[RMDB]
RNA sequence: GGGAACGACUCGAGUAGAGUCGAAAAGAUCAGGGGAGCCCCCCGUGCUUCCUGCGCUUCCCGCGGCCUGUGCGGGUGGUAAGUGGCGCCGAGGCCGAGCUCAAGUGCGUGGUCCUGGGGGAGCCGCAGAUUAGCACACUUUCGAGUGUGCUAAUCUAAAAGAAACAACAACAACAAC
Reactivity to 2A3 in 0.01 (KOAc 150mM, MgCl2 10mM, bicine 150mM(pH8.5), 24C), signal-to-noise 1, nucleotides 027 to 126: g050a080u170c040a010g000g050g000g000a070g030c060c030c010c080c010c020g030u030g010c010u040u000c000c020u020g000c000g010c010u020u030c000c010c040g030c010g030g050c000c000u090g030u140g040c050g010g140g000u110g010g080u120a170a060g050u080g150g040c050g000c040c070g010a030g020g030c000c000g010a000g000c010u050c090a210a060g030u060g150c050g080u090g010g020u080c010c050u070g000g010g000g020g030a090g000c000c020g000c020
Reactivity to DMS in 0.01 (KOAc 150mM, MgCl2 10mM, bicine 150mM(pH8.5), 24C), signal-to-noise 3, nucleotides 027 to 126: g010a100u000c090a100g000g020g000g000a110g010c010c040c090c020c070c120g010u010g000c090u000u000c040c010u000g010c090g020c030u000u000c030c080c020g040c080g010g010c050c050u000g000u000g020c030g000g020g020u010g000g010u000a080a110g020u000g010g000c040g020c030c090g000a100g010g010c020c020g010a120g010c060u000c120a070a090g020u010g010c030g010u010g000g000u010c030c040u010g010g000g000g000g000a100g020c040c060g030c120